Source: RMDB library OK2TST, as collected in RNAgym. The record gives the reactivity of an RNA of 177 nucleotides to DMS and 2A3. For DMS the reverse transcriptase was MarathonRT. 2A3 adducts were read by reverse transcription with SuperScript II with manganese.

RNA sequence: GGGAACGACUCGAGUAGAGUCGAAAAGUGGAAUUGCAAUUGCCCUAUCUUUCAUGAUUGAUCAAUUUAUAGGUGUUCCACAUGAUCAGUUAAGUCAAUUAGGUAAGUAUAAUCAACCGGCAGCUAAUACGCCUAAAUAGUUCGCUAUUUAGGCGUAAAAAGAAACAACAACAACAAC
Reactivity to DMS in 0.01 (KOAc 150mM, MgCl2 10mM, bicine 150mM(pH8.5), 24C), signal-to-noise 4, nucleotides 027 to 126: g020u000g020g000a050a050u000u010g010c120a100a090u000u000g010c050c020c020u000a050u010c100u010u010u000c080a090u010g000a030u000u000g020a020u000c010a050a090u000u020u010a130u000a080g020g000u010g010u000u000c030c020a060c080a120u000g000a030u010c010a060g000u010u000a050a090g010u000c070a060a080u000u000a050g010g000u000a030a060g020u010a070u010a040a080u000c080a060a060c050c030g010g020c040a030g000c080u010a070a170
Reactivity to 2A3 in 0.01 (KOAc 150mM, MgCl2 10mM, bicine 150mM(pH8.5), 24C), signal-to-noise 2, nucleotides 027 to 126: g070u050g010g020a030a010u000u130g010c040a060a120u070u060g000c000c000c000u000a100u000c050u040u180u090c090a070u140g060a050u010u010g020a000u020c000a030a110u020u220u170a210u140a090g190g000u060g030u070u010c000c000a000c000a020u040g020a020u010c040a020g060u040u070a060a030g080u050c030a030a100u140u030a150g050g010u030a060a070g020u020a110u090a170a060u080c010a020a070c010c000g030g010c010a000g070c000u000a060a020